[RMDB]
RNA sequence: GGGAACGACUCGAGUAGAGUCGAAAAGAUAUGGAAAUACCGAGGCUUUUGACGGAGCUCGGAAACGAGGUUCCGAUAAGCCUGUAUUUCCUAAGUCAAAACGAACUAGGGUUCGCCCUAGUUCGAAGGAAUUACACGAGUUCGCUCGUGUAAUUCCAAAAGAAACAACAACAACAAC
Reactivity to DMS in 0.01 (KOAc 150mM, MgCl2 10mM, bicine 150mM(pH8.5), 24C), signal-to-noise 2, nucleotides 027 to 126: g010a020u000a220u030g000g000a030a000a000u000a000c100c300g000a030g000g020c010u000u000u010u010g010a260c150g010g000a010g010c000u000c000g010g000a050a020a110c010g000a030g000g000u000u000c000c000g040a080u010a000a000g010c000c020u000g000u000a010u000u000u000c000c000u010a010a100g010u000c020a090a070a120a240c010g050a000a000c000u000a000g000g000g020u000u000c220g000c000c000c000u000a000g010u000u000c000g000a030a080
Reactivity to 2A3 in 0.01 (KOAc 150mM, MgCl2 10mM, bicine 150mM(pH8.5), 24C), signal-to-noise 2, nucleotides 027 to 126: g000a010u040a010u070g000g040a020a010a000u070a020c180c270g210a150g040g000c010u050u200u280u260g050a050c000g010g010a020g020c030u020c010g000g060a010a010a000c020g010a000g110g090u170u000c000c000g030a050u040a180a030g000c010c000u000g000u000a000u000u000u000c000c000u000a010a000g000u000c000a050a000a080a190c020g000a000a000c000u000a010g070g030g020u060u050c260g170c020c010c010u000a000g000u000u000c000g000a000a030